[RMDB]
RNA sequence: GGGAACGACUCGAGUAGAGUCGAAAAUAGCAGUUAGUAGUUGCCUAAACCCAUUGCAAUAUAUGGGACAGUAGAGGUCGCAAGCCUAUACUGUGCGGUGAACAUUCUAGUAGGCCGCCUCAACAGACGAUAUUGCGCUUUUCGAAGCGCAAUAUCGAAAAGAAACAACAACAACAAC
Reactivity to DMS in 0.01 (KOAc 150mM, MgCl2 10mM, bicine 150mM(pH8.5), 24C), signal-to-noise 2, nucleotides 027 to 126: u000a080g010c030a100g000u000u000a060g000u030a080g000u000u000g020c030c010u030a030a120a230c000c000c000a030u010u000g000c140a160a110u070a070u040a010u000g000g000g010a060c020a000g000u000a010g020a030g000g000u040c080g040c300a100a300g000c000c030u000a080u000a000c010u010g000u000g000c080g010g000u000g030a120a120c150a140u010u010c110u010a040g000u010a080g000g000c020c030g000c030c010u040c060a080a080c240a040g000a080
Reactivity to 2A3 in 0.01 (KOAc 150mM, MgCl2 10mM, bicine 150mM(pH8.5), 24C), signal-to-noise 2, nucleotides 027 to 126: u190a000g000c020a000g060u020u030a010g020u060a020g020u050u050g000c000c020u060a080a070a070c010c000c000a010u020u030g000c020a010a010u000a000u000a000u070g000g000g000a010c020a000g000u010a000g000a000g010g040u140c090g030c170a080a030g000c010c000u000a000u000a000c000u000g010u010g060c000g050g050u040g030a070a000c010a040u130u040c070u030a000g000u010a040g100g000c000c000g010c000c000u030c020a050a220c020a050g160a020

Structure probing data (DMS and 2A3) for a 177-nucleotide construct. The RNA was probed in 150 mM KOAc, 10 mM MgCl2 and 150 mM bicine (pH 8.5) at 24 C. For 2A3 the reverse transcriptase was SuperScript II with manganese.